Structure probing data (2A3) for a 207-nucleotide construct. The reactions ran in a buffer of 150 mM KOAc, 10 mM MgCl2 and 150 mM bicine (pH 8.5), at 24 C.

RNA sequence: GGGAACGACUCGAGUAGAGUCGAAAACCAUAAUUGUUCGCAAUUAUGGAAACGGGCCUCCUCGCAUGGUGGGGCGGUGAACCUGGUCAGGUCGGGAACGAAGCAGCCACAAUCGUUUUCCGCCAGUGCCGAAAACCCGGAUGGUUCGCCAUCCGGGGGGAAGAAGUAAGUUCGCUUACUUCUUCCCAAAAGAAACAACAACAACAAC
Reactivity to 2A3 in 0.01 (KOAc 150mM, MgCl2 10mM, bicine 150mM(pH8.5), 24C), signal-to-noise 3, nucleotides 027 to 156: c000c000a000u000a000a000u010u020g040u030u070c200g000c130a000a000u000u000a000u010g010g020a050a080a120c050g010g080g040c010c000u030c000c020u030c020g090c100a130u080g080g010u080g040g040g010g030c040g000g000u030g030a040a060c070c030u050g020g040u110c060a050g030g050u150c050g020g010g030a020a050c010g000a020a010g070c080a040g050c070c020a080c110a050a110u050c020g000u000u000u060u110c000c010g000c000c000a030g030u060g090c050c000g060a100a100a040a020c010c000c000g000g000a000u000g000g050u040u050c250g010c090c000a000u000c000c010g000g000g000
Source: RMDB library ARCHII, as collected in RNAgym. Reactivities are given for positions 27 through 156. For 2A3, 1,478 sequencing reads were counted.